[RMDB]
RNA sequence: GGGAACGACUCGAGUAGAGUCGAAAAACUAGGAGCGCACAUCACUCUAAGACUGUACGACAGUCUGUCUCUCUAGCACGCUUGUUCAACGAGAGAGAGAGAGCGUUGGAACAAGUGUGCAACGAAAUCAACGGGAAUGCUUCGGCAUUCCCGUUGAAAAAGAAACAACAACAACAAC
Reactivity to 2A3 in 0.01 (KOAc 150mM, MgCl2 10mM, bicine 150mM(pH8.5), 24C), signal-to-noise 2, nucleotides 027 to 126: a000c070u070a070g030g080a030g020c050g040c050a020c010a140u090c020a010c030u010c010u000a040a010g010a000c010u020g070u130a030c030g050a010c090a010g000u010c020u030g030u010c100u020c000u010c020u030a030g000c000a000c000g010c000u000u000g000u000u000c000a000a020c000g010a020g010a000g010a020g010a010g010a010g020a200g040c010g010u000u050g140g000a030a010c010a000a000g000u000g000u000g040c010a010a000c060g030a030a010a020
Reactivity to DMS in 0.01 (KOAc 150mM, MgCl2 10mM, bicine 150mM(pH8.5), 24C), signal-to-noise 2, nucleotides 027 to 126: a150c110u020a090g000g000a020g010c070g040c070a080c170a120u010c080a020c030u000c040u010a080a060g000a000c010u010g000u010a050c110g000a300c300a020g000u000c000u020g030u040c030u000c040u010c080u000a300g000c010a010c000g010c000u000u000g010u000u000c010a030a030c030g000a090g000a190g010a070g010a100g000a080g000a090g010c010g000u010u000g030g030a000a010c010a020a020g000u010g010u000g020c000a010a000c300g030a040a080a130